[RMDB]
RNA sequence: GGGAACGACUCGAGUAGAGUCGAAAACCGCAACCACAGAGUCGUUAACGGAAUACUUUUCACAAUCCUAUCCUAUAAAACAUGCCACAGCUGUUGCCGAUCCGCAAACAAAGCAAUGCAAGGGUUAUGGAUUUGUGACUUUUGCAGAUGUUGAAGAAUUAGGAUAUCCAUUCGUGGAUAUCCUAAUAAAAGAAACAACAACAACAAC
Reactivity to DMS in 0.01 (KOAc 150mM, MgCl2 10mM, bicine 150mM(pH8.5), 24C), signal-to-noise 2, nucleotides 027 to 156: c000c080g030c100a080a160c080c040a110c070a180g040a070g020u000c010g070u000u000a130a150c030g040g050a080a110u000a030c030u000u000u000u000c040a080c010a070a070u000c060c000u010a080u000c000c010u000a120u010a050a120a110a080c040a060u000g040c000c070a070c190a100g020c000u000g020u000u020g030c000c020g010a130u010c080c060g010c110a070a040a110c090a060a090a200g000c010a040a110u000g000c040a090a120g030g000g000u010u010a030u000g030g010a190u000u000u000g030u000g000a030c140u020u000u010u020g010c000a060g010a150u000g000u010u000g020a110a120g010a130
Reactivity to 2A3 in 0.01 (KOAc 150mM, MgCl2 10mM, bicine 150mM(pH8.5), 24C), signal-to-noise 3, nucleotides 027 to 156: c030c010g010c080a010a030c050c060a060c020a100g060a020g020u010c020g000u040u070a090a040c050g030g020a080a080u220a250c060u090u120u050u060c030a030c010a020a030u010c000c000u030a030u050c000c020u070a090u100a130a070a060a040c050a050u070g050c060c020a060c010a100g010c040u040g020u030u020g000c010c020g080a100u100c050c030g030c020a020a090a040c020a060a160a010g010c020a040a030u120g010c010a030a060g050g000g000u040u050a060u190g040g000a020u060u070u160g010u010g000a010c010u080u080u020u050g010c000a020g010a160u090g050u060u080g030a120a050g050a040
Conditions: 150 mM KOAc, 10 mM MgCl2 and 150 mM bicine (pH 8.5), 24 C. Structure probing data (DMS and 2A3) for a 207-nucleotide construct. For 2A3, 1,660 sequencing reads were counted. DMS adducts were read by reverse transcription with MarathonRT. For DMS, 2,173 sequencing reads were counted.